[RMDB]
RNA sequence: GGGAACGACUCGAGUAGAGUCGAAAAAGGCACAAGUAGGACACCAACAUUACCUGCAAGCAAGACGCAAAAUUAAUAGAACAUCACCAUACUUGUGGCUUUCUUGCAAGUCGUGCAGUUGCUGCCUGGAGUUAUAUCUGUUCGCAGAUAUAACUCCAAAAGAAACAACAACAACAAC
Reactivity to 2A3 in 0.01 (KOAc 150mM, MgCl2 10mM, bicine 150mM(pH8.5), 24C), signal-to-noise 3, nucleotides 027 to 126: a000g060g000c010a020c020a080a020g100u090a060g140g080a020c000a030c070c020a000a020c000a020u000u070a020c000c010u010g010c000a000a010g000c000a020a010g030a010c010g000c000a020a000a040a090u180u140a100a110u140a130g100a100a060c040a120u160c020a040c090c020a030u110a270c060u000u010g000u000g010g010c000u030u020u020c000u000u000g000c010a030a000g010u020c010g070u030g020c010a050g040u060u030g030c060u020g000c000c010u010
Reactivity to DMS in 0.01 (KOAc 150mM, MgCl2 10mM, bicine 150mM(pH8.5), 24C), signal-to-noise 2, nucleotides 027 to 126: a050g010g000c040a030c040a090a090g020u000a110g030g030a120c070a200c060c040a090a120c040a010u000u000a030c040c020u000g050c030a030a020g000c050a040a030g000a020c060g000c000a060a020a100a050u000u010a080a110u010a090g010a100a100c170a080u010c130a090c120c030a060u010a090c060u000u000g020u010g000g000c020u000u000u000c010u000u000g020c010a020a020g030u000c060g020u000g000c090a090g000u020u000g010c120u000g020c020c010u000